[RMDB]
This 170-nucleotide RNA was probed chemically with DMS and 2A3.
DMS adducts were read by reverse transcription with MarathonRT.
It was measured as part of the RMDB library 15KLIB.

RNA sequence: GGGAACGACUCGAGUAGAGUCGAAAACAAUAGACGCGCUGCAGCGUACUCUUCACCUCUGCAAUCUUAUGCCUGCUGGACUCAUUCCUGCGGUUAUGAUUAUGUCUACAACCCUUUCUUUGUCGAUUAAUCUGUCGGUUCGCCGACAGAAAAAGAAACAACAACAACAAC
Reactivity to DMS in 0.01 (KOAc 150mM, MgCl2 10mM, bicine 150mM(pH8.5), 24C), signal-to-noise 2, nucleotides 027 to 129: c100a130a110u060a000g040a090c090g040c050g020c040u010g040c080a000g030c130g000u040a070c060u020c030u020u020c030a030c040c040u000c000u030g040c000a060a120u030c000u070u020a000u030g050c050c000u050g050c040u010g010g000a000c240u050c250a020u000u000c000c000u070g030c000g000g020u000u000a090u030g030a000u000u000a060u060g030u040c030u000a040c090a050a080c040c010c040u000u000u000c070u040u030u020g030u000c050g030a130u020u020a040a190
Reactivity to 2A3 in 0.01 (KOAc 150mM, MgCl2 10mM, bicine 150mM(pH8.5), 24C), signal-to-noise 6, nucleotides 027 to 129: c010a000a080u080a080g060a040c040g020c000g010c070u060g010c010a020g010c020g070u070a060c020u030c000u030u000c000a000c010c000u010c010u040g020c020a020a060u000c020u060u150a040u190g040c010c040u120g010c010u050g000g010a050c030u030c200a110u190u050c000c000u020g000c020g010g000u060u030a050u060g020a010u010u090a050u140g020u000c000u000a040c030a060a050c010c000c000u020u090u010c040u010u090u080g110u070c010g010a040u020u040a050a080